[RMDB]
RNA sequence: GGGAACGACUCGAGUAGAGUCGAAAAGAUGUUCGGUAGUUUCGAACUGCCAACGUCAACGUAAACGCAAUUGUAUAGUAUUAGGUACUUCAUGAUCAAGUGAGGCAGUUCUCCAUCUGCCAAAAGCUUUAGCAUGGUAUGUGCAGCAGCUUGAACACCUUGAUACAUGCUUCGGCAUGUAUCAAGGAAAAGAAACAACAACAACAAC
Reactivity to DMS in 0.01 (KOAc 150mM, MgCl2 10mM, bicine 150mM(pH8.5), 24C), signal-to-noise 1, nucleotides 027 to 156: g000a130u000g050u000u000c110g150g040u000a030g000u000u000u020c190g000a100a070c010u000g000c000c010a050a020c000g010u010c000a100a110c090g000u000a080a040a030c040g000c090a060a140u000u040g060u000a070u000a090g000u010a070u000u000a100g000g020u000a000c010u000u000c020a090u000g010a170u000c170a010a080g000u000g000a140g010g000c020a000g000u000u000c080u000c150c080a040u010c000u000g130c000c040a010a050a040a230g050c010u000u050u020a120g000c070a080u000g000g070u010a050u010g040u020g000c010a110g000c060a050g010c010u010u000g010a070a090c110a100
Reactivity to 2A3 in 0.01 (KOAc 150mM, MgCl2 10mM, bicine 150mM(pH8.5), 24C), signal-to-noise 3, nucleotides 027 to 156: g000a010u030g010u020u060c100g000g020u010a010g000u010u060u120c280g050a120a030c000u000g040c010c000a000a000c010g000u000c050a080a040c050g090u180a100a080a040c120g000c140a050a100u100u100g060u080a110u040a110g070u020a070u170u080a080g020g040u030a040c000u000u050c030a040u040g020a050u040c070a020a040g000u000g070a080g010g000c000a010g000u090u040c040u060c060c010a120u020c020u020g040c030c000a020a050a000a020g020c010u040u010u020a030g020c020a000u000g080g010u110a040u150g020u020g010c000a000g000c030a000g000c020u050u120g080a090a000c030a040
An RNA of 207 nucleotides, treated with DMS and 2A3 and read out base by base. The DMS profile rests on 1,832 reads. 2A3 adducts were read by reverse transcription with SuperScript II with manganese. It was measured as part of the RMDB library OK3TST. The RNA was probed in 150 mM KOAc, 10 mM MgCl2 and 150 mM bicine (pH 8.5) at 24 C.